Conditions: 150 mM KOAc, 10 mM MgCl2 and 150 mM bicine (pH 8.5), 24 C. The record gives the reactivity of an RNA of 170 nucleotides to 2A3 and DMS. For 2A3, 76,393 sequencing reads were counted.
RNA sequence: GGGAACGACUCGAGUAGAGUCGAAAAGUCGUGCAUGCUGGGGACGAACCCGCCUCCGGGCGCUCCCCUCGGACCUCCGUCGAGGGGGUUCACAUCCCCAACCCGCGGGCCGGCUACUCUUCUUUCCGAACGUAGUACUUCGGUACUACGAAAAGAAACAACAACAACAAC
Reactivity to 2A3 in 0.01 (KOAc 150mM, MgCl2 10mM, bicine 150mM(pH8.5), 24C), signal-to-noise 9, nucleotides 027 to 129: g020u020c020g100u180g070c020a020u050g020c040u050g010g000g010g020a000c020g000a020a020c000c000c010g300c100c040u030c030c030g030g000g000c070g020c090u070c000c010c000c010u020c020g020g020a040c010c020u120c030c020g060u160c100g040a030g000g010g000g010g000u000u000c000a000c000a030u040c000c000c000c010a020a050c010c030c030g010c020g000g020g010c000c000g010g010c010u040a080c050u060c000u140u040c010u030u040u010c020c020g060a110a060
Reactivity to DMS in 0.01 (KOAc 150mM, MgCl2 10mM, bicine 150mM(pH8.5), 24C), signal-to-noise 9, nucleotides 027 to 129: g010u000c000g040u070g040c000a040u000g030c040u050g010g000g000g010a050c170g000a020a020c020c020c020g040c080c050u000c070c050g030g010g020c150g040c150u030c030c010c050c060u010c160g010g010a070c030c030u060c030c030g000u080c140g000a040g050g000g000g000g030u000u000c030a080c110a240u030c000c000c000c000a050a070c070c070c080g000c030g030g020g000c000c020g000g000c010u010a020c080u020c070u090u020c100u030u020u030c030c020g030a120a180